[RMDB]
RNA sequence: GGGAACGACUCGAGUAGAGUCGAAAAUCUCUUAUGAGAAGGGCGUCGUGAACACAGUUAAGUGGCUCGUCUGUAGCUCCCGGAGGUGAGUACACCUCUACGUAUAUGGGGCGAUGAGGGGUCAAGACUUAGAAAAUGACUUCGGUCAUUUUCUAAGAAAAGAAACAACAACAACAAC
Reactivity to DMS in 0.01 (KOAc 150mM, MgCl2 10mM, bicine 150mM(pH8.5), 24C), signal-to-noise 5, nucleotides 027 to 126: u000c010u000c000u010u000a130u010g010a060g010a070a090g010g010g020c020g020u000c010g010u000g010a180a080c060a070c130a090g000u010u020a080a130g030u000g000g000c010u000c000g000u000c020u000g010u000a300g000c010u000c000c020c110g000g000a020g020g030u000g000a300g010u020a120c040a020c000c000u000c000u000a030c210g010u000a090u010a120u000g010g010g000g010c020g000a070u000g000a040g000g010g010g000u000c010a060a080g010a130
Reactivity to 2A3 in 0.01 (KOAc 150mM, MgCl2 10mM, bicine 150mM(pH8.5), 24C), signal-to-noise 1, nucleotides 027 to 126: u030c000u010c010u050u220a180u170g050a060g020a030a070g030g000g020c030g010u050c020g000u030g020a040a000c060a000c010a110g040u120u210a150a030g030u060g060g000c000u010c000g300u000c060u000g060u050a000g000c010u010c010c000c000g000g000a020g000g000u010g020a120g140u100a130c000a000c000c000u000c020u000a010c020g010u040a030u010a090u270g000g020g000g000c040g030a010u040g000a010g050g000g010g000u000c000a010a010g020a010
Chemical mapping of a 177-nucleotide RNA with DMS and 2A3.
Reactivities are given for positions 27 through 126.
For DMS the reverse transcriptase was MarathonRT.
The data come from the RNA Mapping Database (RMDB), library RFMREP.
For DMS, 5,159 sequencing reads were counted.
The 2A3 profile rests on 1,064 reads.
Conditions: 150 mM KOAc, 10 mM MgCl2 and 150 mM bicine (pH 8.5), 24 C.